[RMDB]
RNA sequence: GGGAACGACUCGAGUAGAGUCGAAAAUGAAUUCUAAUAUUAUUCAUUAUACAUAUUGAAUUCGCGAGCUUAGUUCAUUUUAAAGUAAAGAGUUUUUUGUAUGUAAAGUAUAUUAGUAAAACACAGAGAGAUGACUAAUAUUCGUAUUAGUCAUCUCAAAAGAAACAACAACAACAAC
Reactivity to 2A3 in 0.01 (KOAc 150mM, MgCl2 10mM, bicine 150mM(pH8.5), 24C), signal-to-noise 2, nucleotides 027 to 126: u110g020a040a070u180u080c030u040a010a000u020a030u130u070a060u030u110c010a020u030u300a110u030a180c010a000u050a000u070u120g010a000a000u000u000c010g070c120g090a040g040c130u020u020a020g080u200u160c050a090u160u240u140u210a120a060a000g010u010a040a120a090g040a060g010u030u010u020u040u060u040g010u070a030u000g030u000a020a070a140g040u010a070u000a000u070u070a010g040u020a010a020a120a100c030a030c050a000g070a000